Record summary:
This 207-nucleotide RNA was probed chemically with 2A3. The data come from the RNA Mapping Database (RMDB), library M2RFPK. The RNA was probed in 150 mM KOAc, 10 mM MgCl2 and 150 mM bicine (pH 8.5) at 24 C.
RNA sequence: GGGAACGACUCGAGUAGAGUCGAAAAGUGCCUCGUCGGCCCGGCAUGCCAACCUGAUCCGAAGUUCAAGGUGGUUUCUCUGGCCUUCCAGAUAGAUGCGCGUCGGAAGAACCGACGAACAAACCUUAAAACAAAACGACGUUCGCGUCGUUUUGAAGUUUUAGAACGUCUUCGGACGUUCUAAAACAAAAGAAACAACAACAACAAC
Reactivity to 2A3 in 0.01 (KOAc 150mM, MgCl2 10mM, bicine 150mM(pH8.5), 24C), signal-to-noise 2, nucleotides 027 to 156: g050u030g050c000c000u030c010g010u000c000g010g000c030c010c000g000g060c000a020u120g030c000c020a080a100c060c020u020g000a020u090c040c040g110a080a020g050u030u070c060a060a000g010g010u000g010g000u000u080u010c050u000c000u010g000g000c040c020u190u100c040c010a010g030a070u140a070g080a060u180g050c080g000c040g040u000c010g000g000a150a090g020a150a120c000c000g000a000c000g000a020a020c030a020a110a040c020c000u100u300a070a140a040a130c020a000a000a000a000c000g000a000c000g010u020u110c220g000c020g100u000c000g000u000u000u000u000g000a000a000